[RMDB]
RNA sequence: GGGAACGACUCGAGUAGAGUCGAAAAAUCAUCUGGUACCCGCACUAUGCCUGGCUGUUGUUGAGCGUCUACCUCACGGUAGCCCUGGUUGCGCUCGUGGUGGUCGGGUCGAUGGCUCACGUCCGGCCAUACCAUGCAGGUUCGCCUGCAUGGUAUGAAAAGAAACAACAACAACAAC
Reactivity to DMS in 0.01 (KOAc 150mM, MgCl2 10mM, bicine 150mM(pH8.5), 24C), signal-to-noise 6, nucleotides 027 to 126: a060u010c060a040u010c050u010g020g020u010a060c030c020c010g020c110a070c080u010a040u010g010c020c010u000g010g000c020u000g010u000u000g010u010u000g010a050g020c080g010u000c060u010a050c110c010u000c110a090c180g000g000u000a030g000c040c020c080u000g010g020u000u000g000c060g010c020u000c050g020u000g010g010u000g010g010u010c020g000g000g010u000c050g000a060u000g000g020c020u000c060a120c120g000u000c020c020g010g020c110
Reactivity to 2A3 in 0.01 (KOAc 150mM, MgCl2 10mM, bicine 150mM(pH8.5), 24C), signal-to-noise 3, nucleotides 027 to 126: a000u040c020a020u030c040u100g100g010u100a070c000c000c000g090c010a030c030u090a080u160g020c000c000u010g020g000c010u010g050u140u030g040u060u080g030a010g010c020g060u050c030u080a070c030c010u070c020a040c050g050g020u040a020g000c000c000c030u030g060g000u040u080g020c040g000c000u050c040g060u040g010g040u030g020g050u060c000g000g000g040u000c000g020a020u050g060g000c010u020c020a060c050g050u020c010c010g010g000c000
Source information: Source: RMDB library OK2TST, as collected in RNAgym. This 177-nucleotide RNA was probed chemically with DMS and 2A3. 2A3 adducts were read by reverse transcription with SuperScript II with manganese. As a SHAPE reagent, 2A3 marks flexible, mostly unpaired nucleotides at the ribose 2'-OH. The reactions ran in a buffer of 150 mM KOAc, 10 mM MgCl2 and 150 mM bicine (pH 8.5), at 24 C. Reactivities are given for positions 27 through 126. The 2A3 profile rests on 7,023 reads.